An RNA of 177 nucleotides, treated with DMS and 2A3 and read out base by base. For 2A3 the reverse transcriptase was SuperScript II with manganese. For DMS, 2,399 sequencing reads were counted. The reactions ran in a buffer of 150 mM KOAc, 10 mM MgCl2 and 150 mM bicine (pH 8.5), at 24 C. High DMS reactivity at an A or C suggests that its Watson-Crick edge is free.
RNA sequence: GGGAACGACUCGAGUAGAGUCGAAAAUAAUCAAGAUGAAUCGUUUUUAGUUUGCUUGCUUACCUUAAGGGCCAGCAUGAGAUCUACUUGAAUCUUUUUAUGUAGGCAGAGAGCGACGGAAUUUAAACACUGGAUAGGACUUCGGUCCUAUCCAGUGAAAAGAAACAACAACAACAAC
Reactivity to DMS in 0.01 (KOAc 150mM, MgCl2 10mM, bicine 150mM(pH8.5), 24C), signal-to-noise 2, nucleotides 027 to 126: u020a040a100u010c080a100a030g070a090u000g010a130a110u050c060g030u000u020u010u000u040a120g040u040u000u000g040c040u020u000g000c020u000u000a150c070c070u030u020a080a090g020g020g000c020c010a110g020c040a030u040g000a060g000a000u000c030u000a050c150u010u020g000a000a110u000c050u000u000u000u010u020a010u030g000u000a080g000g000c040a090g000a120g000a000g010c010g000a060c140g000g030a030a010u030u010u030a040a060a140
Reactivity to 2A3 in 0.01 (KOAc 150mM, MgCl2 10mM, bicine 150mM(pH8.5), 24C), signal-to-noise 2, nucleotides 027 to 126: u130a000a070u090c060a030a050g050a030u100g050a010a080u060c040g090u000u050u000u070u150a160g030u020u060u110g000c000u000u010g000c000u010u050a110c020c010u050u110a080a090g000g000g000c000c000a000g000c020a020u100g010a050g000a100u030c000u040a090c000u050u010g020a060a080u060c020u050u190u040u010u010a130u220g030u010a060g000g000c080a020g010a000g000a000g090c010g060a020c010g000g020a020a020u060u030u100a140a060a010